Structure probing data (2A3 and DMS) for a 177-nucleotide construct.
RNA sequence: GGGAACGACUCGAGUAGAGUCGAAAAUAUUAGAUUUAAGCUCACACUGGUCAAAAGGAACCAAGAUACAAAGAACUCUGAGCUGUCAUCGUCCCCAUCUCUGUGAGCCACAACCAACAGCAGGACCAAAACGACUGAGGUUCGCCUCAGUCGUUUUAAAAGAAACAACAACAACAAC
Reactivity to 2A3 in 0.01 (KOAc 150mM, MgCl2 10mM, bicine 150mM(pH8.5), 24C), signal-to-noise 1, nucleotides 027 to 126: u300a170u200u170a040g040a130u070u070u070a020a000g000c000u000c000a040c000a020c010u000g030g000u020c040a020a070a000a110g110g030a010a010c010c020a060a000g040a030u210a100c050a000a150a090g020a100a100c000u000c090u090g000a000g010c000u000g040u000c000a000u020c000g010u020c050c000c000c060a130u000c010u010c000u020g020u020g000a000g010c010c000a020c110a130a030c040c000a000a120c040a000g010c000a000g060g000a040c070c010
Reactivity to DMS in 0.01 (KOAc 150mM, MgCl2 10mM, bicine 150mM(pH8.5), 24C), signal-to-noise 2, nucleotides 027 to 126: u040a040u020u030a120g000a070u010u040u020a090a130g020c010u000c020a100c110a160c060u030g010g000u000c030a150a100a080a170g000g030a090a010c030c020a040a040g040a040u070a160c150a050a100a020g000a050a020c030u000c080u000g000a060g000c000u000g000u020c080a160u010c070g030u020c040c000c010c000a070u010c030u000c090u000g010u000g000a090g000c060c050a000c120a120a070c020c020a060a090c090a120g020c050a150g000g020a050c120c110